[RMDB]
RNA sequence: GGGAACGACUCGAGUAGAGUCGAAAAUGUCGGCGAAGCGGAUCGGCGUCCGGCGCAUCUCGCCGAACUCGGAGAUCAGCUUGCCGUCCUCGCUGUAGACCUUGAGGGGGAUCUGCAGCUGGACGUUAGUAACUAGGUACUUCGGUACCUAGUUACUAAAAGAAACAACAACAACAAC
Reactivity to DMS in 0.01 (KOAc 150mM, MgCl2 10mM, bicine 150mM(pH8.5), 24C), signal-to-noise 2, nucleotides 027 to 126: u020g040u000c040g020g000c020g000a020a020g030c010g010g000a010u000c000g010g050c260g010u000c040c000g000g000c010g050c300a180u010c230u040c030g040c010c000g000a030a030c020u000c060g000g010a150g010a020u010c010a050g010c020u000u020g000c010c030g010u000c000c030u020c220g000c010u010g030u000a000g000a010c000c010u000u000g020a160g010g040g000g020g000a120u000c000u000g000c000a000g010c000u000g010g010a090c100g000u000u000
Reactivity to 2A3 in 0.01 (KOAc 150mM, MgCl2 10mM, bicine 150mM(pH8.5), 24C), signal-to-noise 7, nucleotides 027 to 126: u220g020u040c030g010g010c110g050a040a000g000c010g020g020a030u010c050g080g030c040g090u010c020c000g020g010c020g000c030a130u090c110u080c080g000c000c000g010a030a030c020u030c060g180g080a120g000a070u030c020a000g020c020u030u050g020c010c000g000u000c000c010u020c090g010c000u000g010u020a010g000a010c010c010u030u120g100a300g030g090g010g000g080a180u000c000u000g000c000a010g000c010u010g020g000a010c020g010u010u010

Record summary:
The data come from the RNA Mapping Database (RMDB), libraries RFM100 and RFMREP. Structure probing data (DMS and 2A3) for a 177-nucleotide construct. For DMS the reverse transcriptase was MarathonRT. The reactions ran in a buffer of 150 mM KOAc, 10 mM MgCl2 and 150 mM bicine (pH 8.5), at 24 C.